[RMDB]
RNA sequence: GGGAACGACUCGAGUAGAGUCGAAAAGAUAUGGAAAUUGUGGAGGAACUACGAUGUUAGUCGGAAACGACUGGGCAUCGCCGUUGAAACAAUUUCCUAAGUCAAAAGCCAGGGUUCGCCCUGGCAACACGAAUAUAUCCUUCGGGAUAUAUUCGUGAAAAGAAACAACAACAACAAC
Reactivity to DMS in 0.01 (KOAc 150mM, MgCl2 10mM, bicine 150mM(pH8.5), 24C), signal-to-noise 5, nucleotides 027 to 126: g000a030u010a300u020g000g010a010a000a010u000u000g010u000g000g010a160g000g000a100a030c090u010a150c020g020a020u000g020u000u010a020g020u000c000g000g010a070a090a130c000g010a020c000u000g010g010g000c010a010u000c010g020c020c090g010u000u000g010a300a160a010c010a000a010u000u000u000c000c010u010a030a070g010u010c030a100a060a110a140g000c000c000a000g010g020g000u000u010c300g000c000c000c000u000g000g010c000a010a030
Reactivity to 2A3 in 0.01 (KOAc 150mM, MgCl2 10mM, bicine 150mM(pH8.5), 24C), signal-to-noise 4, nucleotides 027 to 126: g010a010u040a010u070g000g000a000a000a000u010u000g000u000g020g060a090g050g070a180a130c160u190a080c280g000a010u000g010u030u010a010g000u000c010g000g000a030a030a020c000g000a010c020u020g020g100g010c000a010u030c010g020c050c020g130u150u060g000a010a010a000c000a000a000u000u010u000c000c000u000a030a010g020u020c020a040a070a110a090g010c010c000a000g040g020g010u080u130c270g120c040c010c000u000g000g000c000a000a000